[RMDB]
This 177-nucleotide RNA was probed chemically with DMS and 2A3. The DMS profile rests on 1,273 reads. For 2A3, 1,572 sequencing reads were counted.
RNA sequence: GGGAACGACUCGAGUAGAGUCGAAAAAAAAAGUGCGUAAUCGCGUCAUUGAGUGACGUGAAGAUCAUCCAAGUGUGCUGUCUACAGUCGUAGAUAGCGCACAAUACGCUGAUGAUCAUUCAAAAAAGUAUUAGCACCUGUUCGCAGGUGCUAAUACAAAAGAAACAACAACAACAAC
Reactivity to DMS in 0.01 (KOAc 150mM, MgCl2 10mM, bicine 150mM(pH8.5), 24C), signal-to-noise 2, nucleotides 027 to 126: a080a080a010a100a000g020u010g000c110g020u010a170a110u000c030g000c000g010u000c000a030u020u000g010a110g030u000g000a000c000g060u000g020a070a100g000a000u000c010a000u000c000c120a050a170g000u000g020u000g000c000u000g000u000c000u010a000c000a190g020u020c200g000u000a000g000a000u000a000g020c010g020c000a000c010a040a030u010a140c120g010c110u010g000a030u000g010a010u000c000a090u000u010c030a000a030a040a030a080a060
Reactivity to 2A3 in 0.01 (KOAc 150mM, MgCl2 10mM, bicine 150mM(pH8.5), 24C), signal-to-noise 2, nucleotides 027 to 126: a000a000a000a010a000g140u080g010c010g090u050a080a090u040c000g000c000g000u000c000a020u120u260g190a060g250u050g000a000c010g020u050g000a020a000g000a020u020c000a000u000c020c020a130a100g000u010g010u000g000c000u020g000u000c000u000a050c060a190g120u180c170g020u140a000g000a020u000a000g000c000g010c000a000c000a000a010u050a020c050g060c120u080g000a020u000g000a000u010c020a060u160u210c110a030a070a080a050a010a010